[RMDB]
RNA sequence: GGGAACGACUCGAGUAGAGUCGAAAAAAAGAUAUGGACAACUAAGCUUCAGCAGACGCUCCGAAGAACAACAUUCGGAAACGAAUGUUGGGAGGAGUCGUCUGUGCGAUGUUGUCCUAAGUCAAAACUGAUUAGGAUACUUCGGUAUCCUAAUCAGAAAAGAAACAACAACAACAAC
Reactivity to DMS in 0.01 (KOAc 150mM, MgCl2 10mM, bicine 150mM(pH8.5), 24C), signal-to-noise 3, nucleotides 027 to 126: a090a090a130g000a000u000a010u010g000g000a030c000a000a000c010u000a300a300g000c000u000u020c040a050g010c010a010g010a030c000g020c020u020c000c000g020a110a220g010a130a160c010a000a000c010a000u000u000c000g000g000a000a020a010c000g000a010a010u000g010u000u000g000g000g010a000g010g000a000g010u020c030g020u010c010u000g010u000g020c010g000a130u020g000u000u000g020u000c000c010u000a000a050g000u000c010a100a090a100a170
Reactivity to 2A3 in 0.01 (KOAc 150mM, MgCl2 10mM, bicine 150mM(pH8.5), 24C), signal-to-noise 3, nucleotides 027 to 126: a010a000a020g010a010u040a010u050g010g000a000c010a000a020c010u110a130a000g010c040u300u300c200a010g000c000a000g010a000c010g030c010u000c010c010g300a300a020g000a000a000c010a000a000c000a010u000u000c000g010g000a010a000a000c010g000a010a000u000g010u010u000g000g000g000a010g000g000a010g020u130c020g000u000c000u000g000u000g000c000g020a030u300g000u000u000g000u000c000c010u000a000a000g000u000c000a000a020a100a200